Source information:
Chemical mapping of a 177-nucleotide RNA with 2A3 and DMS. Values cover nucleotides 27 to 126. For DMS the reverse transcriptase was MarathonRT. For 2A3, 684 sequencing reads were counted. 2A3 adducts were read by reverse transcription with SuperScript II with manganese.

RNA sequence: GGGAACGACUCGAGUAGAGUCGAAAAAUUCAGAAAAUGCUCAUAGCAAAAAGAGUCCUGCAGGAAACCUGUUUCUGUUUCCAUGGAGACUAAAUGGAGAAGACUCGAGCCUUGACUCAAGAAUAUGUAUAACUCCGUUAUUCGUAACGGAGUUAUAAAAAGAAACAACAACAACAAC
Reactivity to 2A3 in 0.01 (KOAc 150mM, MgCl2 10mM, bicine 150mM(pH8.5), 24C), signal-to-noise 1, nucleotides 027 to 126: a000u010u000c010a050g110a060a230a000a100u100g050c010u020c030a130u210a150g020c050a080a140a100a140a100g010a000g010u000c010c060u120g060c040a010g000g000a010a080a100c060c060u080g050u070u050u030c050u000g080u000u060u000c000c010a060u100g070g000a150g000a060c080u120a090a160a000u060g010g020a160g010a110a000g070a030c000u010c090g000a010g030c000c030u100u130g000a080c000u010c060a040a040g080a130a070u300a190u290g010
Reactivity to DMS in 0.01 (KOAc 150mM, MgCl2 10mM, bicine 150mM(pH8.5), 24C), signal-to-noise 3, nucleotides 027 to 126: a110u000u000c040a110g020a080a070a100a100u020g030c060u000c130a100u000a120g020c050a030a100a070a120a150g000a060g020u000c030c080u000g030c160a080g010g000a030a010a030c060c130u010g010u000u000u010c020u000g000u000u000u000c000c010a140u000g000g000a100g000a100c080u000a050a060a080u000g000g000a070g020a080a090g010a040c020u000c030g010a060g010c010c030u000u010g000a180c030u020c040a040a100g000a090a070u000a040u000g010